[RMDB]
RNA sequence: GGGAACGACUCGAGUAGAGUCGAAAAGAAGUUCCACGCUGACUGAGCAGGAGGCCACUGUCCUAUCGAUUGUCUCAGGGCGUCCGAGCUCAACCUUCUGGGAGGAGCAGAACAAGCAUCCGCUGCCGCAUCAUAGCGUAUUCGUACGCUAUGAUGCAAAAGAAACAACAACAACAAC
Reactivity to 2A3 in 0.01 (KOAc 150mM, MgCl2 10mM, bicine 150mM(pH8.5), 24C), signal-to-noise 8, nucleotides 027 to 126: g100a070a010g030u060u010c020c020a040c020g020c030u090g050a080c010u020g020a000g030c010a020g000g040a020g000g040c020c040a290c140u130g030u120c010c020u120a140u260c070g160a160u090u220g100u050c030u010c040a010g020g000g000c010g070u020c020c020g020a030g010c000u020c030a030a060c000c010u090u110c070u120g040g010g030a090g010g020a010g010c020a010g040a070a050c080a080a010g030c020a080u040c020c020g020c100u080g090c050c060
Reactivity to DMS in 0.01 (KOAc 150mM, MgCl2 10mM, bicine 150mM(pH8.5), 24C), signal-to-noise 4, nucleotides 027 to 126: g000a130a100g000u010u000c000c060a120c090g000c020u000g000a110c080u000g000a010g040c050a190g000g010a020g030g040c010c040a160c120u010g000u010c050c050u040a210u040c110g000a100u040u000g010u050c040u000c000a040g020g000g000c000g000u000c030c080g010a140g020c030u000c000a020a130c090c020u000u020c060u000g000g000g030a090g020g000a050g000c030a080g000a060a030c120a050a070g010c050a120u020c050c040g030c040u010g010c180c060

Record summary:
Conditions: 150 mM KOAc, 10 mM MgCl2 and 150 mM bicine (pH 8.5), 24 C. Structure probing data (2A3 and DMS) for a 177-nucleotide construct. For DMS the reverse transcriptase was MarathonRT. For DMS, 5,323 sequencing reads were counted. Source: RMDB library OK1LIB, as collected in RNAgym. Reactivities are given for positions 27 through 126.